[RMDB]
RNA sequence: GGGAACGACUCGAGUAGAGUCGAAAAUUCCUUUCUUCUGGUUUCCUUCCUCUGCUUCAGCGGCCUCGCCCGGAGUCUUGACCAGCGCAGGUUCUGACGCGACCGGUGGCAUCACCGAGUUCGCUCAAGCCUCAUACCUCCUUUUUCUUCAUUCUAGCUUUUUGUUACAGUUCGCUGUAACAAAAAGAAAAGAAACAACAACAACAAC
Reactivity to 2A3 in 0.01 (KOAc 150mM, MgCl2 10mM, bicine 150mM(pH8.5), 24C), signal-to-noise 2, nucleotides 027 to 156: u040u020c000c000u020u060u040c050u090u000c020u070g040g000u030u070u070c010c000u050u050c020c010u130c000u050g030c010u060u060c030a030g020c050g080g000c010c040u070c090g030c040c010c030g060g040a030g020u000c010u080u100g070a050c010c050a060g040c060g010c110a030g010g010u020u040c120u100g020a000c070g000c000g020a010c000c010g000g020u010g010g100c130a220u290c000a160c000c010g030a050g060u140u090c000g000c000u010c000a020a020g010c000c000u020c010a070u110a150c010c020u070c000c020u060u070u040u040u090c040u140u110c010a160u060u010c030u030a030g010